[RMDB]
RNA sequence: GGGAACGACUCGAGUAGAGUCGAAAAGCUGUCUUCGAUGCCGAACGGCAUUUGGCUAUCGAACGUAGCGGCGAGUCCUUGCCGGACACUCCGCUGUCGGUAUUCGGCAGUCUGGCGUUCAUGGCAAUGGUCCCCAUUUAUUCGUAAAUGGGGACCAAAAAGAAACAACAACAACAAC
Reactivity to 2A3 in 0.01 (KOAc 150mM, MgCl2 10mM, bicine 150mM(pH8.5), 24C), signal-to-noise 2, nucleotides 027 to 126: g010c030u030g070u150c030u030u030c020g020a020u060g000c000c000g050a060a040c080g250g040c060a110u060u050u120g010g000c030u100a000u030c010g000a000a020c100g030u080a020g010c000g010g000c020g020a010g060u050c010c000u010u070g020c010c060g000g020a030c010a010c050u050c000c010g010c000u000g060u090c000g000g050u200a300u110u270c000g000g000c000a010g020u000c100u090g020g080c010g010u000u060c060a110u120g000g000c000a020a040
Reactivity to DMS in 0.01 (KOAc 150mM, MgCl2 10mM, bicine 150mM(pH8.5), 24C), signal-to-noise 2, nucleotides 027 to 126: g020c050u000g010u000c080u000u000c020g000a050u010g010c000c000g010a040a080c150g000g000c050a300u040u000u000g030g000c000u000a010u000c000g000a000a010c130g010u000a040g010c000g040g000c080g010a040g020u000c000c000u000u010g040c130c140g000g000a110c080a050c020u000c000c020g000c000u000g000u000c020g010g000u000a200u000u000c000g010g010c080a010g000u000c020u000g010g000c130g000u000u000c030a090u000g010g000c030a060a180
The record gives the reactivity of an RNA of 177 nucleotides to 2A3 and DMS. The reactions ran in a buffer of 150 mM KOAc, 10 mM MgCl2 and 150 mM bicine (pH 8.5), at 24 C. The 2A3 profile rests on 1,662 reads. 2A3 adducts were read by reverse transcription with SuperScript II with manganese.